[RMDB]
RNA sequence: GGGAACGACUCGAGUAGAGUCGAAAAGAUAUGGACCGUCCCAGAAGCCCACUAUAGUCGGAAACGACUAUAUGGAACUACUUCUGUGGACGGUCCUAAGUCAAAGCGCGUUGUUCGCAACGCGCAAGAUAAUACCAGCGUUCGCGCUGGUAUUAUCAAAAGAAACAACAACAACAAC
Reactivity to DMS in 0.01 (KOAc 150mM, MgCl2 10mM, bicine 150mM(pH8.5), 24C), signal-to-noise 4, nucleotides 027 to 126: g000a050u000a300u010g000g010a010c000c000g010u000c000c000c000a010g010a010a010g000c170c020c010a030c260u000a000u000a000g010u010c000g020g000a120a120a250c000g010a010c000u000a000u000a020u000g000g010a070a090c120u020a180c010u000u000c000u000g010u010g000g000a000c000g010g000u000c000c000u000a000a080g010u000c050a070a100a130g010c000g020c000g010u000u000g000u000u020c230g020c020a010a000c000g000c000g010c000a000a010
Reactivity to 2A3 in 0.01 (KOAc 150mM, MgCl2 10mM, bicine 150mM(pH8.5), 24C), signal-to-noise 2, nucleotides 027 to 126: g010a030u060a040u100g020g000a000c020c010g000u000c010c010c010a000g000a010a010g050c000c010c010a050c040u000a000u010a010g010u000c010g040g040a110a060a090c030g000a000c020u000a000u000a000u040g000g000a050a020c030u180a020c000u060u010c000u010g060u270g010g030a000c000g000g020u000c000c000u000a010a010g010u000c020a030a020a040g000c000g010c000g020u010u030g050u040u110c230g000c130a010a000c000g000c000g000c000a010a000

The record gives the reactivity of an RNA of 177 nucleotides to DMS and 2A3. The data come from the RNA Mapping Database (RMDB), library TTRDEL. For DMS, 4,347 sequencing reads were counted. Reactivities are given for positions 27 through 126. DMS adducts were read by reverse transcription with MarathonRT. For 2A3 the reverse transcriptase was SuperScript II with manganese. The RNA was probed in 150 mM KOAc, 10 mM MgCl2 and 150 mM bicine (pH 8.5) at 24 C.